[RMDB]
RNA sequence: GGGAACGACUCGAGUAGAGUCGAAAACUUUAUAAUGUUUAAUCAUUGCCGCAAGGUUUUCAGAGCUCUGAUCGGCACUAUACUCAUCCAAAAUCACAUCAGGUAACACAACCGCAAAAGGACUGUUGCCUAUACAAGGUUUUGCGCAAAGCACCGCGCAAAACCAGCUGUUCGCAGCUGGUUUUGCAAAAGAAACAACAACAACAAC
Reactivity to 2A3 in 0.01 (KOAc 150mM, MgCl2 10mM, bicine 150mM(pH8.5), 24C), signal-to-noise 2, nucleotides 027 to 156: c020u050u110u200a210u290a240a110u140g060u090u190u180a240a140u180c010a030u060u100g040c020c020g050c050a030a060g000g000u000u020u060u190c060a110g060a040g060c040u000c010u160g030a080u090c040g010g040c010a010c020u020a060u030a160c020u050c020a030u130c010c010a030a060a090a040u100c020a030c030a170u080c080a080g000g000u030a000a000c010a010c030a100a300c000c000g120c100a150a220a070a010g030g000a030c010u010g010u000u010g000c030c000u010a000u010a030c110a020a000g000g030u030u040u040u070g080c010g030c030a020a020a020g070c050a080c080c120g070c070